[RMDB]
RNA sequence: GGGAACGACUCGAGUAGAGUCGAAAAGGUACGGAUCCCAUGCAUGAUACGACUCAUGCUAGGUACGUACACAUGAGAGUGAUCCUCGAUGCCAUGGUACAGUACCAUGUAUGACCAUGCGACGAUCCUUGCGUAAGCCGUUCGCGGCUUACGCAAGAAAAGAAACAACAACAACAAC
Reactivity to 2A3 in 0.01 (KOAc 150mM, MgCl2 10mM, bicine 150mM(pH8.5), 24C), signal-to-noise 3, nucleotides 027 to 126: g110g000u060a010c030g050g040a070u130c050c020c030a030u120g050c000a000u030g040a120u210a300c170g190a150c130u000c010a000u000g000c000u010a090g020g000u010a020c020g000u030a000c170a000c010a030u030g060a040g000a000g140u080g040a100u050c030c010u030c040g030a090u150g060c050c000a000u000g010g020u080a230c080a150g020u010a020c020c020a140u190g030u020a050u060g000a020c000c000a010u010g010c000g050a020c050g030a090u040c000
Reactivity to DMS in 0.01 (KOAc 150mM, MgCl2 10mM, bicine 150mM(pH8.5), 24C), signal-to-noise 2, nucleotides 027 to 126: g000g000u000a020c050g000g020a050u040c010c060c040a120u010g040c000a000u010g010a050u030a120c300g020a180c220u040c000a000u000g020c000u000a070g000g010u000a060c000g020u020a020c010a130c140a060u010g040a140g020a070g000u010g020a110u000c090c040u000c000g000a110u010g020c250c050a010u000g000g040u000a070c110a080g020u000a050c020c080a200u020g010u000a030u000g020a050c100c020a030u000g000c000g010a110c210g000a050u000c040
Source information:
Chemical mapping of a 177-nucleotide RNA with 2A3 and DMS. The reactions ran in a buffer of 150 mM KOAc, 10 mM MgCl2 and 150 mM bicine (pH 8.5), at 24 C. The 2A3 profile rests on 1,914 reads. The data come from the RNA Mapping Database (RMDB), library OK2TRN.